[RMDB]
RNA sequence: GGGAACGACUCGAGUAGAGUCGAAAAGAUAGCGAUGUGAACGCCGACUUCUUUGAGUCGAGCCAGGGUGGCUCUGGCGGUAUGUAGGUCUUGCACCACAACGUUUUCGGUGAUUUCCAAACACACGUGGUUGGAAAUCAUUCGUGAUUUCCAACCAAAAAGAAACAACAACAACAAC
Reactivity to DMS in 0.01 (KOAc 150mM, MgCl2 10mM, bicine 150mM(pH8.5), 24C), signal-to-noise 9, nucleotides 027 to 126: g010a080u000a050g020c020g020a090u000g020u000g010a130a110c090g020c040c300g000a030c020u000u000c060u000u010u000g010a160g010u000c010g010a070g000c010c020a140g020g010g020u000g020g010c030u000c020u010g030g010c020g000g010u010a040u000g010u010a050g010g010u000c020u000u010g010c050a100c060c010a050c050a030a080c050g010u000u000u000u000c030g000g010u000g000a180u000u000u000c020c030a090a080a080c130a060c170a080c280g010
Reactivity to 2A3 in 0.01 (KOAc 150mM, MgCl2 10mM, bicine 150mM(pH8.5), 24C), signal-to-noise 5, nucleotides 027 to 126: g060a040u090a020g020c020g010a030u040g020u040g110a090a010c060g010c010c000g000a010c000u040u040c010u040u090u210g040a030g020u020c010g000a000g010c010c000a060g110g130g140u180g040g000c020u010c060u070g010g000c030g030g040u160a060u070g070u070a030g010g020u010c020u040u160g010c030a000c020c010a010c010a030a040c020g020u010u000u050u080c030g020g010u040g040a080u020u010u010c020c000a040a040a020c080a010c010a030c140g090